[RMDB]
RNA sequence: GGGAACGACUCGAGUAGAGUCGAAAAGAGGGCCGCGGUGCUCUGGAGUAGAGGCUCUGCCUUCGAAACACCAUCGAUCGUCCCUUCUUCUUUACCUUCUUCUGGCUCUUCCGAUGGAGACGCGACCGGUGGCAUCACCUCUCGGUUCGCUCCCAACCUCAUUGGAAUCGUUCGCGAUUCCAAUGAGAAAAGAAACAACAACAACAAC
Reactivity to 2A3 in 0.01 (KOAc 150mM, MgCl2 10mM, bicine 150mM(pH8.5), 24C), signal-to-noise 4, nucleotides 027 to 156: g030a010g000g010g000c010c000g000c000g010g010u010g000c000u000c000u000g030g000a000g020u020a000g010a030g010g000c060u090c260u300g050c040c000u160u140c000g010a010a010a000c000a020c060c060a000u000c000g110a300u020c000g020u030c010c000c000u070u050c000u010u010c000u030u080u090a070c000c010u090u110c020u070u030c040u120g030g010c030u020c020u180u050c020c030g070a100u120g030g000a120g030a100c070g010c030g050a030c030c020g000g020u020g010g000c090a150u160c020a050c020c000u000c010u010c030g010g050u090u050c000g000c020u000c000c000c010a020a050c010
Source: RMDB library VIROID, as collected in RNAgym. Structure probing data (2A3) for a 207-nucleotide construct. For 2A3, 2,719 sequencing reads were counted. The reactions ran in a buffer of 150 mM KOAc, 10 mM MgCl2 and 150 mM bicine (pH 8.5), at 24 C.